[RMDB]
An RNA of 207 nucleotides, treated with 2A3 and read out base by base. It was measured as part of the RMDB library OK3TST.
RNA sequence: GGGAACGACUCGAGUAGAGUCGAAAAUCUGGCUUCUAAAAUCACAGGAAGAAUGGGAAAUAGGACACACACACACACAUACACACACACACACACACACAUGAGUUUCGUACAAAGCCUAGGACACUGGCCUCUCCAUCUGUGACCAUCUCCCAGGACAGAGAUUCUCUUUCGAGAGAAUCUCUGUAAAAGAAACAACAACAACAAC
Reactivity to 2A3 in 0.01 (KOAc 150mM, MgCl2 10mM, bicine 150mM(pH8.5), 24C), signal-to-noise 1, nucleotides 027 to 156: u010c030u030g020g010c000u040u000c020u110a000a080a120a120u070c050a090c060a090g060g010a030a060g080a110a130u110g000g010g050a050a130a080u070a060g070g060a040c020a000c010a030c000a000c000a000c010a000c040a000c020a000u080a070c040a030c010a000c010a020c000a010c000a010c000a010c010a000c010a000c000a000c000a010u030g050a060g040u070u070u130c090g030u050a040c070a040a160a030g050c000c040u050a060g000g040a010c010a000c070u050g040g010c000c010u000c000u000c030c000a030u040c030u050g070u040g060a050c050c000a040u070c010u010c080c000c030a010g190g030
The RNA was probed in 150 mM KOAc, 10 mM MgCl2 and 150 mM bicine (pH 8.5) at 24 C.